[RMDB]
RNA sequence: GGGAACGACUCGAGUAGAGUCGAAAAGAUAUGGAGAUUCACUGCUUUUGACGCUUUACGGUCGGAAACGACCGAAGAAGCGAUAAGCAGUAAUCUCCUAAGUCAAACCGAAGGUUCGCCUUCGGAAGACCAUGGUAAUCUUCGGAUUACCAUGGUCAAAAGAAACAACAACAACAAC
Reactivity to DMS in 0.01 (KOAc 150mM, MgCl2 10mM, bicine 150mM(pH8.5), 24C), signal-to-noise 1, nucleotides 027 to 126: g000a030u000a300u000g000g000a020g020a000u000u000c170a020c010u000g010c000u010u010u010u000g000a190c090g010c010u000u000u000a290c000g000g000u010c000g000g000a090a130a160c020g000a020c000c000g010a110a100g000a000a010g000c000g060a080u050a010a020g020c000a000g000u000a020a040u000c000u000c000c000u000a000a000g020u000c000a150a140a220c000c010g010a030a000g020g010u010u020c290g040c010c000u030u000c000g010g000a060a050
Reactivity to 2A3 in 0.01 (KOAc 150mM, MgCl2 10mM, bicine 150mM(pH8.5), 24C), signal-to-noise 2, nucleotides 027 to 126: g040a020u100a060u130g000g010a020g030a000u050u030c200a020c040u010g030c070u000u080u200u300g300a160c090g010c000u040u020u040a030c000g000g010u030c030g010g000a030a080a090c030g010a020c000c000g030a040a040g030a010a010g010c020g060a060u060a080a000g010c000a000g020u020a010a000u000c000u000c010c020u000a030a020g020u000c060a060a050a130c010c010g030a000a000g060g020u110u240c300g180c040c000u000u020c020g000g000a000a030